[RMDB]
An RNA of 207 nucleotides, treated with 2A3 and DMS and read out base by base. High DMS reactivity at an A or C suggests that its Watson-Crick edge is free. The DMS profile rests on 1,594 reads.
RNA sequence: GGGAACGACUCGAGUAGAGUCGAAAAGGUUUGCCUAGGAACACAUUUGCACCAACUCCUGGCUUAUUUUCCAUGUGACCCAACAGCUGGUACUAGAGACACCAGCUGCUUUCUGGUGGGGGCAGAAUGAAAACAGCAUGGGCUGAGGCCAAGGCCACCUCAUAGGUGGUUUCGACCACCUAUGAGGAAAAGAAACAACAACAACAAC
Reactivity to 2A3 in 0.01 (KOAc 150mM, MgCl2 10mM, bicine 150mM(pH8.5), 24C), signal-to-noise 3, nucleotides 027 to 156: g040g010u030u060u080g040c010c050u110a050g040g030a070a020c040a010c020a200u110u120u290g040c040a050c050c020a090a070c050u010c010c010u000g010g020c020u050u050a090u050u120u050u050c020c020a030u050g040u040g090a100c010c020c040a040a040c010a020g000c000u010g000g030u030a040c020u050a040g060a010g000a220c000a010c030c000a020g000c000u010g000c000u030u050u010c040u030g040g020u150g060g000g010g010g010c000a010g020a070a030u120g060a020a020a030a110c040a020g020c010a010u030g010g050g000c030u040g030a050g030g000c000c030a020a040g050g010c020c040a050
Reactivity to DMS in 0.01 (KOAc 150mM, MgCl2 10mM, bicine 150mM(pH8.5), 24C), signal-to-noise 1, nucleotides 027 to 156: g000g000u010u010u000g010c010c060u000a020g000g030a120a170c060a040c090a100u010u000u000g030c060a110c000c020a110a170c090u000c030c060u000g030g000c080u010u000a090u020u000u020u030c030c000a100u020g000u010g020a240c060c050c050a010a100c000a010g030c010u000g030g060u000a130c070u000a130g020a220g020a190c110a090c000c020a000g020c000u000g020c030u000u000u010c080u000g000g030u010g040g000g020g060g160c110a110g010a100a060u000g000a060a040a060a100c080a150g000c040a070u010g020g020g030c100u000g030a120g000g050c010c040a040a080g010g010c010c040a130
The 2A3 profile rests on 3,621 reads. The data come from the RNA Mapping Database (RMDB), library OK3TST. 2A3 adducts were read by reverse transcription with SuperScript II with manganese.